Record summary:
An RNA of 177 nucleotides, treated with 2A3 and DMS and read out base by base. Source: RMDB libraries RFM100 and RFMREP, as collected in RNAgym. For 2A3, 1,155 sequencing reads were counted. DMS adducts were read by reverse transcription with MarathonRT.
RNA sequence: GGGAACGACUCGAGUAGAGUCGAAAAUCUCUGAGAAGAGGGAGCAUGGGGUGUGCUGAUUUAAAAACAGAAAAUGCAAAGUUGGACUGAAAAUAUCCCACGUCUUCUAAGCAAUCUGCUUAAGGCUAUGCCUGAUUACUUUCGAGUAAUCAGGCAUAAAAGAAACAACAACAACAAC
Reactivity to 2A3 in 0.01 (KOAc 150mM, MgCl2 10mM, bicine 150mM(pH8.5), 24C), signal-to-noise 2, nucleotides 027 to 126: u010c010u010c020u000g060a060g010a140a000g060a130g000g000g050a000g030c040a050u060g000g010g000g020u080g050u040g030c050u010g050a170u040u160u200a100a130a000a000a000c010a000g020a010a110a020a040u130g040c020a030a060a030g000u010u070g050g020a020c000u010g080a100a070a000a000u100a040u060c020c020c000a010c020g030u030c010u100u010c020u010a000a000g000c050a000a190u070c030u120g050c000u040u050a110a030g040g000c010u000
Reactivity to DMS in 0.01 (KOAc 150mM, MgCl2 10mM, bicine 150mM(pH8.5), 24C), signal-to-noise 3, nucleotides 027 to 126: u000c020u010c010u000g020a180g030a080a100g000a030g000g000g000a050g000c010a080u000g010g000g000g020u020g000u020g000c040u000g000a090u000u010u010a050a080a070a130a050c060a050g010a040a030a060a070u010g010c090a060a060a090g030u000u000g000g000a090c040u040g010a080a030a010a100u040a080u020c040c010c010a110c150g010u000c010u000u000c120u000a010a070g020c000a120a120u050c210u010g020c020u000u000a060a010g000g000c050u010